[RMDB]
This 177-nucleotide RNA was probed chemically with 2A3 and DMS. The reactions ran in a buffer of 150 mM KOAc, 10 mM MgCl2 and 150 mM bicine (pH 8.5), at 24 C. Reactivities are given for positions 27 through 126. The data come from the RNA Mapping Database (RMDB), library TTRDEL. 2A3 adducts were read by reverse transcription with SuperScript II with manganese.

RNA sequence: GGGAACGACUCGAGUAGAGUCGAAAAGAUAUGGAUUCAGGACAUGACCGAUUGCAUCGGAAACGAUGUAGAGGUCAACAGCCUGAUCCUAAGUCAAAAGAACCAAUGAGUUCGCUCAUUGGUUCAACCGUAACUCGUUGUUCGCAACGAGUUACGGAAAAGAAACAACAACAACAAC
Reactivity to 2A3 in 0.01 (KOAc 150mM, MgCl2 10mM, bicine 150mM(pH8.5), 24C), signal-to-noise 1, nucleotides 027 to 126: g060a040u070a060u140g000g010a030u200u300c010a010g080g000a050c090a140u120g020a010c000c030g210a290u060u240g000c020a000u010c030g100g000a160a010a010c020g040a040u010g040u080a000g050a060g060g000u000c000a010a020c000a020g110c020c040u030g000a000u000c000c000u020a160a030g060u010c030a020a010a000a220g000a010a010c000c040a010a010u030g000a000g110u000u230c300g030c080u000c000a010u000u000g000g030u000u000c040a010a030
Reactivity to DMS in 0.01 (KOAc 150mM, MgCl2 10mM, bicine 150mM(pH8.5), 24C), signal-to-noise 1, nucleotides 027 to 126: g000a040u000a300u000g020g000a030u000u000c010a000g000g010a010c090a230u000g000a000c000c020g000a190u030u000g000c000a010u000c000g000g000a080a050a260c000g030a000u000g010u000a010g010a300g000g050u000c000a010a090c240a240g000c000c040u000g000a030u000c000c000u020a040a140g000u000c000a040a010a040a070g000a010a010c000c000a020a030u000g010a040g010u000u000c200g010c010u000c000a000u000u000g000g010u000u000c000a010a050